[RMDB]
RNA sequence: GGGAACGACUCGAGUAGAGUCGAAAAUACUGAAUCUGGGUGUAUUCAUGUAUGCUGCUACCUGUAUGUUUUCAAACAAUAAGAAUUUAUUGAAACAUAUAAGACAUUAUACUUUCUCUUCUCCAGUAUUGGAUUAUAGACUGCACUUAGUUUAAAACUAAUGCGAUGGAUUCGUCCAUCGCAUUAGAAAAGAAACAACAACAACAAC
Reactivity to 2A3 in 0.01 (KOAc 150mM, MgCl2 10mM, bicine 150mM(pH8.5), 24C), signal-to-noise 3, nucleotides 027 to 156: u090a010c030u020g040a020a060u070c020u020g050g010g010u020g020u040a070u050u090c060a050u150g040u040a030u020g030c020u020g020c020u050a090c010c000u020g000u010a010u010g000u030u090u010u060c030a040a080a080c020a090a070u240a220a090g110a170a140u140u200u190a080u020u150g000a000a010a000c000a000u010a010u030a110a000g030a040c010a000u030u070a010u080a070c000u060u110u050c020u000c000u140u020c030u000c000c020a040g040u120a300u130u110g020g020a000u010u040a040u050a030g030a020c030u050g020c030a010c040u030u000a040g020u130u050u130a060a070a030a000
Reactivity to DMS in 0.01 (KOAc 150mM, MgCl2 10mM, bicine 150mM(pH8.5), 24C), signal-to-noise 1, nucleotides 027 to 156: u020a150c030u030g010a050a110u020c060u000g000g040g030u000g030u000a050u000u010c080a180u010g020u010a050u000g010c150u000g020c000u020a080c050c040u000g030u010a010u030g000u000u000u010u000c050a080a010a210c040a040a040u020a080a190g000a170a190u000u010u000a060u000u000g000a110a040a030c030a010u000a010u010a030a070g040a190c010a040u000u010a040u000a010c010u020u000u000c040u000c080u010u010c110u040c010c050a090g000u040a050u000u040g020g010a160u000u000a100u000a060g020a120c080u000g020c040a060c040u000u000a080g010u010u030u000a060a110a070a180